[RMDB]
RNA sequence: GGGAACGACUCGAGUAGAGUCGAAAAACUUCUUCCAUAUGUAUGGAGUCGAGCCUGAAAAUUACACUACGCUUCGUUUUGUGGACCCUCUUACAGGAUACACGAAAGAUGAGAACCCAAGAGUGGAGAAAAGGAUAUACUUCGGUAUAUCCUUUUCAAAAGAAACAACAACAACAAC
Reactivity to DMS in 0.01 (KOAc 150mM, MgCl2 10mM, bicine 150mM(pH8.5), 24C), signal-to-noise 6, nucleotides 027 to 126: a120c080u000u000c050u000u000c010c010a070u010a120u020g020u010a060u000g010g000a050g020u010c030g000a070g010c010c020u000g000a060a070a070a080u010u000a100c050a040c010u010a090c090g000c070u000u000c040g010u000u000u000u000g020u000g000g000a050c050c000c010u000c200u010u010a090c210a030g030g000a060u000a050c010a020c010g000a010a020a050g000a060u000g000a120g010a090a120c060c050c050a070a070g000a080g010u010g010g000a240
Reactivity to 2A3 in 0.01 (KOAc 150mM, MgCl2 10mM, bicine 150mM(pH8.5), 24C), signal-to-noise 3, nucleotides 027 to 126: a000c020u040u020c010u090u020c030c010a050u160a040u270g200u070a070u120g060g000a010g030u040c020g050a030g060c020c040u040g020a080a070a040a030u130u110a020c040a010c030u090a040c050g020c060u020u060c020g160u060u040u050u020g010u010g010g020a040c000c020c020u030c030u080u090a050c060a100g020g010a020u020a130c020a000c050g030a060a020a000g030a020u090g020a030g030a110a050c030c010c010a010a010g110a010g070u070g020g060a100
Conditions: 150 mM KOAc, 10 mM MgCl2 and 150 mM bicine (pH 8.5), 24 C. An RNA of 177 nucleotides, treated with DMS and 2A3 and read out base by base. For 2A3 the reverse transcriptase was SuperScript II with manganese. DMS adducts were read by reverse transcription with MarathonRT. Reactivities are given for positions 27 through 126.